The data come from the RNA Mapping Database (RMDB), library OK1LIB.
Structure probing data (2A3 and DMS) for a 177-nucleotide construct.
The reactions ran in a buffer of 150 mM KOAc, 10 mM MgCl2 and 150 mM bicine (pH 8.5), at 24 C.
RNA sequence: GGGAACGACUCGAGUAGAGUCGAAAAAGUGACGAGAAACGCUGGCCUGGUUAAGAGACGUGGAGGUGGGACGGGAGAGACUCUGGGAGAGAAGUGGAAAGCUCGUCUGAAUCAGAUGUCGGCCCUGCAUCAUGGACAGAUUCGUCUGUCCAUGAUGAAAAGAAACAACAACAACAAC
Reactivity to 2A3 in 0.01 (KOAc 150mM, MgCl2 10mM, bicine 150mM(pH8.5), 24C), signal-to-noise 6, nucleotides 027 to 126: a020g160u090g050a060c080g040a030g090a120a110a010c040g000c060u020g020g020c010c010u050g010g060u080u080a150a040g080a010g000a110c030g020u050g040g020a090g030g110u250g010g000g040a040c040g020g030g000a040g000a010g020a010c030u030c050u150g040g060g000a050g010a000g020a130a030g050u100g080g100a120a050a010g020c010u020c010g040u000c020u010g060a040a040u040c020a050g010a110u130g070u030c000g000g040c020c020c000u010g020
Reactivity to DMS in 0.01 (KOAc 150mM, MgCl2 10mM, bicine 150mM(pH8.5), 24C), signal-to-noise 4, nucleotides 027 to 126: a110g010u020g010a040c060g000a070g030a090a070a120c130g010c020u000g020g020c010c000u030g010g010u030u010a120a090g000a110g000a070c080g040u040g020g000a070g000g020u040g000g000g020a120c050g020g030g000a090g000a130g000a040c070u000c050u020g010g030g000a130g010a090g020a150a050g010u010g010g000a070a130a080g040c040u010c010g010u000c010u010g010a050a050u020c080a070g010a040u010g000u000c010g000g000c030c010c050u030g000